[RMDB]
RNA sequence: GGGAACGACUCGAGUAGAGUCGAAAAGUCACGUGUCAUAUUCUGAUUGGUCAAUGAAAACAACAAUGCAUUUCAUCUUAUAUGGAGUUGACAUUCAAUCAGAACAUGACACGUGAUAGUCAUCAUUGAUUUAAAAUAUUUUCGAAUAUUUUAAAUCAAAAGAAACAACAACAACAAC
Reactivity to DMS in 0.01 (KOAc 150mM, MgCl2 10mM, bicine 150mM(pH8.5), 24C), signal-to-noise 4, nucleotides 027 to 126: g020u010c000a000c000g030u000g010u010c000a010u000a080u010u000c020u000g000a010u000u000g010g000u030c110a030a010u010g010a120a100a030a110c110a070a180c230a120a090u020g000c190a060u020u010u010c050a040u020c140u020u020a120u030a050u000g010g010a180g010u000u000g000a100c010a120u020u020c040a000a000u000c000a020g020a000a010c040a000u010g000a000c020a000c010g000u000g010a010u010a040g000u010c110a070u000c080a090u010u000
Reactivity to 2A3 in 0.01 (KOAc 150mM, MgCl2 10mM, bicine 150mM(pH8.5), 24C), signal-to-noise 9, nucleotides 027 to 126: g010u000c000a000c000g000u000g000u000c000a000u000a030u010u000c000u000g010a000u010u010g030g020u050c040a020a030u060g080a050a080a030a030c040a020a020c030a060a100u150g090c050a100u040u090u120c040a110u030c070u230u240a180u070a050u270g070g000a070g050u010u010g030a040c000a010u070u060c000a030a000u000c000a000g000a000a000c000a000u000g000a000c000a000c000g000u000g000a000u000a000g000u010c020a080u030c010a020u020u030

Background
This 177-nucleotide RNA was probed chemically with DMS and 2A3. The RNA was probed in 150 mM KOAc, 10 mM MgCl2 and 150 mM bicine (pH 8.5) at 24 C.